RNA sequence: GGGAACGACUCGAGUAGAGUCGAAAAUGCUGGGCCAGAAUCUACAUUUUAACAAGAUGCCCAGAAACUCCUGGAGGGCAGAGGCAUGCCUGCCAUCUUCAUCAUUGCAUUACCACCACCCAACACUAUCGGGGGACCUGCCCUGAUAAUCAGAGUAGGGUCGAUAAAAUUUCGAUUUUAUCGACCCAAAAGAAACAACAACAACAAC
Reactivity to 2A3 in 0.01 (KOAc 150mM, MgCl2 10mM, bicine 150mM(pH8.5), 24C), signal-to-noise 1, nucleotides 027 to 156: u090g000c010u020g000g000g020c020c080a020g160a050a110u070c070u140a060c090a210u030u190u070u220a120a040c100a020a020g040a030u040g000c030c000c000a000g000a010a000a020c030u010c020c000u010g040g030a020g000g000g000c030a020g010a080g100g000c070a000u050g050c010c000u000g030c010c000a050u000c030u050u030c000a080u030c000a040u000u180g020c000a010u070u090a050c060c000a010c000c030a040c000c010c040a040a060c010a030c090u080a020u110c020g000g000g000g000g010a030c000c030u060g020c000c010c000u000g010a000u000a060a000u040c060a010g080a020g020u200a020
Chemical mapping of a 207-nucleotide RNA with 2A3. For 2A3 the reverse transcriptase was SuperScript II with manganese. The 2A3 profile rests on 600 reads. The RNA was probed in 150 mM KOAc, 10 mM MgCl2 and 150 mM bicine (pH 8.5) at 24 C.